RNA sequence: GGGAACGACUCGAGUAGAGUCGAAAACCUGUUAUCUGACCAAUAACAGAACGCACCACAGCGUAAAAUCAUCUGAUUGGGUGAGUUGGUCGCACCGCCAUUUGACGAACGAACGCCAAGCCUAAGCACUACGAGUAUGUGUUCGCACAUACUCGAACACCCGUUAGGGUUUCGACCCUAACGGGUGAAAAGAAACAACAACAACAAC
Reactivity to DMS in 0.01 (KOAc 150mM, MgCl2 10mM, bicine 150mM(pH8.5), 24C), signal-to-noise 1, nucleotides 027 to 156: c070c010u000g000u010u000a010u000c000u000g020a040c040c030a300a020u010a030a030c000a050g020a120a220c080g000c040a200c040c130a050c140a130g000c020g000u030a080a070a020a100u000c020a100u010c050u000g010a100u000u050g000g000g020u000g000a240g040u000u000g050g030u040c010g040c010a040c030c000g020c070c070a130u000u020u000g010a030c000g020a100a040c170g030a060a090c050g120c020c010a060a290g030c010c030u000a110a150g030c050a030c060u000a270c000g030a070g000u000a020u000g040u000g030u040u000c300g000c020a000c000a000u000a000c010u020c000g000a000a150
Reactivity to 2A3 in 0.01 (KOAc 150mM, MgCl2 10mM, bicine 150mM(pH8.5), 24C), signal-to-noise 4, nucleotides 027 to 156: c000c000u000g000u010u000a010u000c020u000g020a000c000c000a010a000u000a000a000c010a000g040a070a020c020g010c020a040c110c040a070c100a090g010c000g030u080a050a090a060a070u120c070a040u030c060u100g120a190u090u150g140g000g020u030g030a040g010u010u060g010g010u010c020g060c020a010c000c010g030c020c000a080u070u050u140g070a070c050g020a120a030c040g010a080a030c030g020c020c000a060a030g010c030c010u120a070a040g030c040a060c120u130a060c080g000a010g000u000a010u000g010u010g020u030u050c070g030c030a000c000a000u000a000c000u000c000g000a010a000
An RNA of 207 nucleotides, treated with DMS and 2A3 and read out base by base. It was measured as part of the RMDB library M2RFPK. Reactivities are given for positions 27 through 156. For 2A3, 2,630 sequencing reads were counted.